[RMDB]
RNA sequence: GGGAACGACUCGAGUAGAGUCGAAAAGAGGGCGGCUCGCAGGCACCAUGACUCCUGUGAGGAUGCAGCACUCCCUGGCAGGUCAGACCUAUGCCGUGCCCCUCAUCCAGCCAGACCUGCGGCGAGAGCUGUACAGCGGGUUCGCCCGCUGUACAGCAAAAGAAACAACAACAACAAC
Reactivity to DMS in 0.01 (KOAc 150mM, MgCl2 10mM, bicine 150mM(pH8.5), 24C), signal-to-noise 1, nucleotides 027 to 126: g010a090g000g000g020c060g030g000c010u010c030g010c030a040g010g000c300a110c120c080a070u010g000a080c110u000c010c040u000g020u000g000a040g000g000a130u010g010c050a040g000c000a180c040u000c030c000c010u010g000g010c020a040g010g000u000c010a130g000a160c100c160u000a080u030g010c070c070g000u000g000c040c020c000c010u000c040a080u010c100c060a070g000c050c070a130g000a060c020c010u000g000c010g000g040c110g000a130g000a160